The record gives the reactivity of an RNA of 170 nucleotides to DMS and 2A3. The reactions ran in a buffer of 150 mM KOAc, 10 mM MgCl2 and 150 mM bicine (pH 8.5), at 24 C. 2A3 adducts were read by reverse transcription with SuperScript II with manganese. DMS adducts were read by reverse transcription with MarathonRT.
[RMDB]
RNA sequence: GGGAACGACUCGAGUAGAGUCGAAAAUUCCCUUCCUCCCCUCCGGCCCUUCCUCGACUCGGGUUGGCUCAUCCUCGGCGAGGGCGACGGUCCUCAGUUCUCUCUAUUCUUUCUUGAAAGAGGAGACAUCACCAAACCUUCGGGUUUGGUAAAAGAAACAACAACAACAAC
Reactivity to DMS in 0.01 (KOAc 150mM, MgCl2 10mM, bicine 150mM(pH8.5), 24C), signal-to-noise 4, nucleotides 027 to 129: u050u010c020c020c030u020u010c030c060u020c020c000c010c010u010c000c000g000g000c020c000c030u000u000c030c000u000c060g040a080c040u010c040g070g000g000u020u020g020g000c010u040c100a110u000c040c040u020c070g000g060c030g060a100g000g010g010c010g030a120c170g010g020u060c030c030u020c060a040g030u050u030c060u020c020u020c000u010a100u070u000c000u040u030u020c040u000u000g040a010a070a040g020a070g040g020a070g030a030c170a080u050c090
Reactivity to 2A3 in 0.01 (KOAc 150mM, MgCl2 10mM, bicine 150mM(pH8.5), 24C), signal-to-noise 8, nucleotides 027 to 129: u010u010c010c000c000u010u040c000c000u010c010c000c000c000u010c000c010g020g010c020c010c000u030u030c000c000u030c010g050a080c010u020c020g040g000g000u040u060g040g000c010u010c020a100u050c010c030u040c040g050g010c060g010a040g000g010g000c030g060a100c080g060g020u020c010c010u030c010a060g010u160u010c030u010c000u000c020u020a140u120u030c010u070u090u020c030u060u120g100a050a020a010g030a020g010g030a020g010a000c030a070u140c030